About this RNA: Structure probing data (DMS and 2A3) for a 177-nucleotide construct. 2A3 adducts were read by reverse transcription with SuperScript II with manganese. For DMS, 1,839 sequencing reads were counted. The reactions ran in a buffer of 150 mM KOAc, 10 mM MgCl2 and 150 mM bicine (pH 8.5), at 24 C. For 2A3, 2,601 sequencing reads were counted.
RNA sequence: GGGAACGACUCGAGUAGAGUCGAAAAGAAAAAGCGGAAGUGGCGAAAUCGGUAGACGCAGUUGAUCAAAGAUCAACGGUAGAAAUACGUGCUGGUUCGAGUCCAGCCUUCCGCACCGAAAAAAAAACAUAGAACUCAAGUUCGCUUGAGUUCUAUGAAAAGAAACAACAACAACAAC
Reactivity to DMS in 0.01 (KOAc 150mM, MgCl2 10mM, bicine 150mM(pH8.5), 24C), signal-to-noise 3, nucleotides 027 to 126: g000a100a080a080a110a120g020c000g020g010a010a000g020u000g000g000c010g000a010a000a010u010c250g010g000u010a010g000a240c000g000c010a280g010u000u000g000a010u000c000a060a140a160g000a040u000c000a010a000c010g000g000u000a020g000a080a120a100u010a000c010g010u000g020c000u000g000g010u000u000c010g000a300g000u000c010c000a000g020c020c010u000u000c000c000g000c010a110c080c030g000a000a000a000a000a010a020a030a030a130
Reactivity to 2A3 in 0.01 (KOAc 150mM, MgCl2 10mM, bicine 150mM(pH8.5), 24C), signal-to-noise 2, nucleotides 027 to 126: g070a010a130a000a020a000g000c020g000g020a000a010g000u010g010g020c010g010a000a000a030u220c120g150g110u060a020g030a010c010g000c010a010g000u000u000g010a030u020c130a300a230a200g020a000u000c000a020a010c000g000g010u010a020g020a020a040a000u030a010c010g000u010g010c010u000g000g000u000u010c000g000a000g000u000c000c000a000g020c020c000u020u020c000c000g010c000a000c000c000g070a130a010a000a010a000a000a000a010a000